[RMDB]
RNA sequence: GGGAACGACUCGAGUAGAGUCGAAAAAUUGUAGUUUCCAGGACGCUGCCUCUAAUAUCUUUGUUAUUAACAAGGACACUUAUGCAGCUCUUAGAAACUCUUUAACUAAUGAUGCCUAUUCACGAUUACAAGACAGUAUGUUCGCAUACUGUCUUGUAAAAGAAACAACAACAACAAC
Reactivity to 2A3 in 0.01 (KOAc 150mM, MgCl2 10mM, bicine 150mM(pH8.5), 24C), signal-to-noise 1, nucleotides 027 to 126: a000u050u080g010u080a000g000u000u040u000c000c000a000g010g000a010c110g000c000u000g000c010c010u030c000u020a020a010u060a060u060c030u020u040u000g040u060u100a300u200u190a180a000c010a000a010g020g000a000c010a010c070u020u000a010u100g000c000a000g010c000u000c000u010u010a000g000a010a000a000c020u030c000u010u060u040a120a040c050u040a130a160u150g090a070u140g050c020c020u150a190u060u170c080a050c200g140a090u000u030